[RMDB]
RNA sequence: GGGAACGACUCGAGUAGAGUCGAAAAUUAAACAACAAGCAAUGUGGCUUAAGGACCGUGCCUGGUAGGUUGUCCAAUUCAACAUAUGGUUCUUACCCGUCAUCGGAAAACUGACCUUUAGGCGUCAGUUCCGCUACGUAUUCGUACGUAGCGGAACAAAAGAAACAACAACAACAAC
Reactivity to 2A3 in 0.01 (KOAc 150mM, MgCl2 10mM, bicine 150mM(pH8.5), 24C), signal-to-noise 1, nucleotides 027 to 126: u050u020a090a010a020c030a000a030c000a000a050g080c020a020a180u200g090u130g210g040c020u030u050a090a050g010g000a010c000c030g000u010g030c030c040u030g040g060u030a010g000g100u100u040g100u120c000c010a050a100u120u170c050a090a040c020a120u160a010u080g040g000u030u020c000u000u020a010c040c040c000g020u000c030a060u220c040g000g040a040a070a100a160c070u070g100a100c000c000u160u170u120a120g060g000c040g090u010c010a000
Reactivity to DMS in 0.01 (KOAc 150mM, MgCl2 10mM, bicine 150mM(pH8.5), 24C), signal-to-noise 2, nucleotides 027 to 126: u000u020a110a120a090c130a050a070c090a090a110g000c140a090a080u010g020u010g000g020c070u000u020a050a020g000g010a050c010c040g000u000g010c070c100u000g010g000u000a040g000g000u000u010g000u030c040c040a070a120u000u030c190a040a060c170a040u000a110u000g000g010u000u000c020u000u000a050c130c030c040g040u020c050a030u000c070g010g000a060a060a050a080c050u000g040a030c010c000u000u010u010a070g020g010c160g050u000c020a010